An RNA of 207 nucleotides, treated with DMS and 2A3 and read out base by base. Conditions: 150 mM KOAc, 10 mM MgCl2 and 150 mM bicine (pH 8.5), 24 C. For DMS, 4,434 sequencing reads were counted. Values cover nucleotides 27 to 156. The 2A3 profile rests on 4,015 reads. 2A3 adducts were read by reverse transcription with SuperScript II with manganese.

RNA sequence: GGGAACGACUCGAGUAGAGUCGAAAAUGAUCGCUAACCAACAAGCAAGUAUCAACUACGCUUUCGCUUAGAACAUACUAAAGCUACACGAAUUGAAUCGCCAUAGUUUGGUUCGUGUCACAGUUUAUGGCUCGGGGUUAACUGGUUCAACUUAAUCACUUCUAUGUGUCUUCGGACACAUAGAAGUAAAAGAAACAACAACAACAAC
Reactivity to DMS in 0.01 (KOAc 150mM, MgCl2 10mM, bicine 150mM(pH8.5), 24C), signal-to-noise 3, nucleotides 027 to 156: u010g020a070u000c050g050c040u010a090a100c020c000a090a180c080a040a060g000c030a170a050g030u000a070u010c050a070a190c030u010a030c050g000c060u000u000u000c090g040c060u000u000a060g010a090a200c090a090u000a080c030u020a090a080a100g000c010u000a110c010a010c000g020a030a070u010u010g010a020a020u000c100g010c080c300a080u000a040g000u000u000u000g030g010u000u000c000g040u000g000u000c070a060c090a060g000u010u000u000a030u010g030g020c010u010c020g050g000g050g000u010u000a010a060c030u010g040g010u000u000c040a070a100c040u000u020a080a140u000c060
Reactivity to 2A3 in 0.01 (KOAc 150mM, MgCl2 10mM, bicine 150mM(pH8.5), 24C), signal-to-noise 6, nucleotides 027 to 156: u130g000a040u070c040g020c040u030a060a060c050c030a060a080c060a060a000g030c020a060a040g030u020a040u150c060a070a070c020u060a030c060g020c010u060u150u150c060g000c010u010u030a010g040a110a020c030a060u100a030c030u100a150a080a020g010c010u010a000c010a000c000g000a020a000u000u040g030a030a030u090c060g080c070c020a050u040a100g010u010u000u020g020g000u010u000c000g000u000g040u060c030a040c030a130g050u070u070u060a040u040g010g010c020u030c020g040g020g000g000u030u060a050a040c040u080g040g060u100u050c040a050a060c050u040u100a040a040u140c050